This 207-nucleotide RNA was probed chemically with 2A3.
RNA sequence: GGGAACGACUCGAGUAGAGUCGAAAACGAUGGGUGUAGAUUACGCCCAUCCAGCGUGCCAAUAAAGGUACUGAUCUGGAACUGAUCGUUCUACUGAUGGUGUUGAUGCGCCAGCCAAUCCUAGGCAAAGUGGACCCAUGGCAAAGCACCGAAAACCCCGUCGAUUAUGAUUCGUCAUAAUCGACGGAAAAGAAACAACAACAACAAC
Reactivity to 2A3 in 0.01 (KOAc 150mM, MgCl2 10mM, bicine 150mM(pH8.5), 24C), signal-to-noise 3, nucleotides 027 to 156: c080g030a000u020g000g050g020u010g020u030a120g060a300u240u160a020c010g000c000c010c000a000u000c000c000a000g010c040g020u040g000c000c000a080a090u300a250a100a100g020g010u010a010c030u040g060a130u080c000u030g030g030a040a070c070u090g030a030u030c030g000u110u000c010u130a150c020u080g060a130u200g000g000u010g020u100u070g030a070u130g000c040g010c020c010a010g030c010c010a020a120u060c030c010u100a090g020g050c060a020a100a040g140u100g040g010a020c000c000c030a040u060g010g000c040a080a040a000g040c000a000c020c000g000a020a060a030a030c000c030